[RMDB]
RNA sequence: GGGAACGACUCGAGUAGAGUCGAAAAGGGUGAAGGAGGAGAAACUUGCCAAGGUAUCCAAGGUGGUGGGGGUCUCAAAGCUGCGCACAAAGUACGAGUCAGCCGAGGCAAAGCGCGCGCUGUGCACGCGCGUACAGUCUUUCGAGACUGUACGCGCAAAAGAAACAACAACAACAAC
Reactivity to DMS in 0.01 (KOAc 150mM, MgCl2 10mM, bicine 150mM(pH8.5), 24C), signal-to-noise 2, nucleotides 027 to 126: g000g010g010u000g020a060a090g020g000a110g050g000a090g000a090a120a090c070u000u000g030c030c030a080a180g000g010u010a100u010c070c080a050a120g000g030u000g000g010u000g020g000g010g000g010u000c070u000c060a030a070a110g000c020u000g020c060g010c080a060c080a090a060a150g010u000a060c200g000a030g000u000c050a140g010c020c020g010a250g010g000c030a040a040a060g030c070g020c010g000c000g010c070u000g020u000g030c070a090c270
Reactivity to 2A3 in 0.01 (KOAc 150mM, MgCl2 10mM, bicine 150mM(pH8.5), 24C), signal-to-noise 2, nucleotides 027 to 126: g090g030g040u110g100a120a030g040g030a030g010g030a020g060a060a110a040c070u030u050g010c000c000a020a030g060g020u070a090u130c020c060a000a050g120g000u090g020g060u120g030g000g010g030g020u000c010u000c000a060a090a030g000c040u030g010c040g000c090a010c030a060a190a000g030u080a080c060g020a010g080u020c040a010g030c030c020g000a030g000g000c020a010a040a050g060c050g010c000g010c030g010c010u020g020u050g060c050a010c030
Structure probing data (DMS and 2A3) for a 177-nucleotide construct. The reactions ran in a buffer of 150 mM KOAc, 10 mM MgCl2 and 150 mM bicine (pH 8.5), at 24 C. Source: RMDB library OK2TRN, as collected in RNAgym. DMS adducts were read by reverse transcription with MarathonRT. The DMS profile rests on 1,531 reads.